[RMDB]
Annotation: The data come from the RNA Mapping Database (RMDB), library OK3TST. An RNA of 207 nucleotides, treated with DMS and 2A3 and read out base by base. Reactivities are given for positions 27 through 156. The DMS profile rests on 1,182 reads. The reactions ran in a buffer of 150 mM KOAc, 10 mM MgCl2 and 150 mM bicine (pH 8.5), at 24 C.

RNA sequence: GGGAACGACUCGAGUAGAGUCGAAAAUGCACUAUAGCCAAAUUACAUACCAGCACAAAGGGAAUUCAGCGGCAGGCCUGAACAGAAUAGAAGUGACAAGCAAGAAUCAAUUAAAGGAGUCAGCCCCCUGGGUCUGUUCAGUAACACAGGCUAGCACCGUUAUACCGUCUUUCGAGACGGUAUAACGAAAAGAAACAACAACAACAAC
Reactivity to DMS in 0.01 (KOAc 150mM, MgCl2 10mM, bicine 150mM(pH8.5), 24C), signal-to-noise 1, nucleotides 027 to 156: u010g010c000a130c100u000a110u010a130g010c000c020a020a060a080u000u000a020c060a070u000a070c040c040a100g010c010a070c090a110a160a050g020g000g020a070a100u000u000c100a070g020c060g000g030c300a030g010g040c040c020u010g020a000a160c000a060g000a080a080u000a070g000a030a010g020u010g010a220c110a060a070g000c070a130a070g000a090a090u000c060a060a020u020u000a020a040a020g020g010a120g020u000c010a070g010c050c020c020c020c110u000g000g110g000u000c020u010g020u000u000c020a190g020u040a070a050c170a060c070a000g000g000c020u010a070g000c010a070c080
Reactivity to 2A3 in 0.01 (KOAc 150mM, MgCl2 10mM, bicine 150mM(pH8.5), 24C), signal-to-noise 1, nucleotides 027 to 156: u220g000c050a010c070u120a020u120a170g000c000c010a030a000a110u170u060a060c010a050u100a010c110c080a070g020c090a040c060a050a090a000g030g050g050a090a040u280u160c110a040g010c000g060g000c010a000g000g020c000c000u000g030a040a000c030a030g000a020a000u120a000g030a050a010g020u140g070a060c060a120a000g040c020a030a010g050a140a090u080c010a030a000u020u010a020a020a100g020g000a000g040u000c000a050g000c000c000c000c050c060u040g020g000g010u000c000u000g000u000u080c020a020g010u080a000a000c010a000c000a060g030g050c010u020a030g060c010a020c060